[RMDB]
The data come from the RNA Mapping Database (RMDB), library OK1LIB. Structure probing data (2A3) for a 177-nucleotide construct. Conditions: 150 mM KOAc, 10 mM MgCl2 and 150 mM bicine (pH 8.5), 24 C.

RNA sequence: GGGAACGACUCGAGUAGAGUCGAAAAGAUUGGGAGGGUCUCCGAGACAGUGUACCCCCCUUUACACCAGACUUCGAGGGUGCCACGGACACAUGCAAUUUCGAUGUGGUGGAGGACCGGCUCACUGCGCGAGAGAGCCUUUCGAGGCUCUCUCGCGAAAAGAAACAACAACAACAAC
Reactivity to 2A3 in 0.01 (KOAc 150mM, MgCl2 10mM, bicine 150mM(pH8.5), 24C), signal-to-noise 1, nucleotides 027 to 126: g110a030u060u160g000g000g000a010g050g080g000u050c140u000c090c020g030a030g030a180c000a000g000u090g070u300a090c000c000c000c000c000c000u000u080u000a000c040a000c000c000a030g040a170c120u000u000c080g010a000g050g080g100u070g110c050c110a160c060g060g090a070c160a000c000a070u070g000c010a000a290u070u050u090c020g020a050u090g000u030g000g000u020g000g000a020g080g000a040c000c000g060g000c000u000c000a030c000u000g010